[RMDB]
RNA sequence: GGGAACGACUCGAGUAGAGUCGAAAAGAUAUGGAUCCAGGUAUCGAGCUGCCUGGAUAGAAAGCAGUAUCGGAAACGAUACUGCUUUCUAUCCAGGGCAGCGAAGACAGUACUGGAUCCUAAGUCAGUACUAAAGUUACUUCGGUAACUUUAGUACAAAAGAAACAACAACAACAAC
Reactivity to DMS in 0.01 (KOAc 150mM, MgCl2 10mM, bicine 150mM(pH8.5), 24C), signal-to-noise 1, nucleotides 027 to 126: g000a090u000a300u010g020g000a000u000c020c000a020g000g000u010a090u000c000g020a300g010c010u000g000c000c000u000g000g030a010u020a000g000a000a000a000g010c000a070g060u000a000u000c020g000g010a140a120a300c020g020a070u000a000c000u040g000c000u000u010u000c010u010a010u000c000c010a070g060g020g010c000a000g010c000g000a060a080g000a030c300a070g020u000a130c000u010g000g000a030u000c000c000u000a000a060g000u010c070a160
An RNA of 177 nucleotides, treated with DMS and read out base by base. The reactions ran in a buffer of 150 mM KOAc, 10 mM MgCl2 and 150 mM bicine (pH 8.5), at 24 C. DMS adducts were read by reverse transcription with MarathonRT. It was measured as part of the RMDB library TTRINS.